[RMDB]
RNA sequence: GGGAACGACUCGAGUAGAGUCGAAAAUACGAUCUUCUGUGUAGAAUAGAUUCCUGUAACCUUUCUAAACGUUCAUAAGAAAGUGAACAUCAUUCGAAGAAGUAUUGAUGCAGAAGAGGGGCUGCCGUCGAGUACGUCCUUUCGAGGACGUACUCGAAAAAGAAACAACAACAACAAC
Reactivity to DMS in 0.01 (KOAc 150mM, MgCl2 10mM, bicine 150mM(pH8.5), 24C), signal-to-noise 1, nucleotides 027 to 126: u000a110c110g050a090u030c000u000u000c000u030g020u020g000u000a100g000a140a000u010a000g080a110u000u060c000c110u020g030u040a160a020c150c000u010u020u050c020u000a160a140a090c190g010u000u170c120a010u020a030a080g000a020a000a090g040u000g000a030a040c070a000u000c000a010u000u050c270g000a120a160g000a140a140g000u000a000u000u050g000a150u080g000c010a080g000a000a030g000a140g000g030g000g040c000u030g000c020c090g000
Reactivity to 2A3 in 0.01 (KOAc 150mM, MgCl2 10mM, bicine 150mM(pH8.5), 24C), signal-to-noise 1, nucleotides 027 to 126: u040a000c050g090a260u000c000u010u010c000u000g030u030g100u000a020g000a030a000u000a000g050a070u090u050c000c000u110g080u070a120a130c000c000u000u040u040c000u000a000a070a070c140g080u100u040c040a030u130a110a060g100a130a050a100g070u010g050a030a000c050a000u090c000a110u080u240c080g030a090a050g000a040a020g090u110a050u000u110g000a000u070g090c000a000g000a030a000g030a050g000g030g000g000c000u060g050c020c000g030
An RNA of 177 nucleotides, treated with DMS and 2A3 and read out base by base. The RNA was probed in 150 mM KOAc, 10 mM MgCl2 and 150 mM bicine (pH 8.5) at 24 C. DMS adducts were read by reverse transcription with MarathonRT. The DMS profile rests on 927 reads. Source: RMDB library OK1LIB, as collected in RNAgym. Values cover nucleotides 27 to 126.